[RMDB]
The record gives the reactivity of an RNA of 177 nucleotides to 2A3 and DMS. The 2A3 profile rests on 624 reads. For 2A3 the reverse transcriptase was SuperScript II with manganese. Source: RMDB library OK1LIB, as collected in RNAgym. For DMS the reverse transcriptase was MarathonRT.
RNA sequence: GGGAACGACUCGAGUAGAGUCGAAAAAGAAUCACAGUUUGAUAAGGUUGCAGAAGAUUACGAUUUCGUGAAUGAGCUUUUGAAUGAUUAUUCAUUCUUUGUGUCUAAUAUGUCUCCAAAGAAAGGCAAACUACCCAGUGUUCGCACUGGGUAGUUUAAAAGAAACAACAACAACAAC
Reactivity to 2A3 in 0.01 (KOAc 150mM, MgCl2 10mM, bicine 150mM(pH8.5), 24C), signal-to-noise 2, nucleotides 027 to 126: a000g060a000a000u040c000a080c000a000g000u000u000u000g050a050u040a060a000g030g120u070u250g000c000a000g010a230a030g000a090u000u010a090c000g060a160u010u000u280c050g010u150g000a000a290u080g040a080g040c030u000u000u090u000g040a000a000u120g060a230u050u170a030u100u180c040a000u000u060c000u000u050u150g090u020g030u000c000u020a000a020u050a130u150g130u000c130u030c080c010a000a180a000g100a020a080a000g030g020c040
Reactivity to DMS in 0.01 (KOAc 150mM, MgCl2 10mM, bicine 150mM(pH8.5), 24C), signal-to-noise 2, nucleotides 027 to 126: a020g010a070a100u040c070a020c110a060g000u000u000u010g040a010u010a070a010g030g010u000u000g000c000a070g000a100a060g040a070u050u010a020c070g000a160u000u000u020c060g020u030g030a080a100u010g000a040g010c030u000u000u010u000g000a050a020u010g010a110u000u040a090u020u020c020a010u000u020c000u000u030u000g010u020g020u010c050u000a050a050u010a050u000g000u000c000u020c070c120a080a060a090g020a090a050a080g020g000c100